Description:
The record gives the reactivity of an RNA of 177 nucleotides to DMS and 2A3. Values cover nucleotides 27 to 126. Reactivities are rounded to 0.1 and cut off at 0 and 3. 2A3 adducts were read by reverse transcription with SuperScript II with manganese. Conditions: 150 mM KOAc, 10 mM MgCl2 and 150 mM bicine (pH 8.5), 24 C.
[RMDB]
RNA sequence: GGGAACGACUCGAGUAGAGUCGAAAAAAGCAGUCGUUCAGUGACGCAAGCGAUUUUUCAAUGCGUUUGUGCCUAAUCUUUGACUGCAAGAGAAUCAUUGUCAUAGUCAAGCGGUCCGCUAUCUGUGGAGUCAUUACCACUUCGGUGGUAAUGACUCAAAAGAAACAACAACAACAAC
Reactivity to DMS in 0.01 (KOAc 150mM, MgCl2 10mM, bicine 150mM(pH8.5), 24C), signal-to-noise 1, nucleotides 027 to 126: a090a010g000c000a000g000u000c000g040u000u030c140a080g000u030g000a160c010g000c000a000a010g000c020g030a010u000u000u000u030u050c280a040a140u030g030c060g000u000u000u000g010u000g000c000c040u010a110a070u010c120u050u020u000g010a010c000u000g000c000a050a070g000a080g000a080a100u000c060a070u020u000g020u000c050a100u000a080g000u020c030a050a090g010c040g030g020u010c110c040g000c040u010a060u010c080u010g000u000g000
Reactivity to 2A3 in 0.01 (KOAc 150mM, MgCl2 10mM, bicine 150mM(pH8.5), 24C), signal-to-noise 3, nucleotides 027 to 126: a000a010g020c030a040g010u050c020g010u100u080c040a020g000u010g060a120c010g000c010a000a000g010c000g030a050u040u000u010u050u240c150a160a170u300g050c000g000u010u000u010g010u000g000c000c010u050a020a080u080c090u110u130u160g000a000c010u000g000c020a060a000g030a000g020a030a170u180c120a100u040u100g080u070c000a030u050a110g000u060c050a080a040g020c020g040g040u100c130c040g000c030u050a100u060c020u020g040u050g090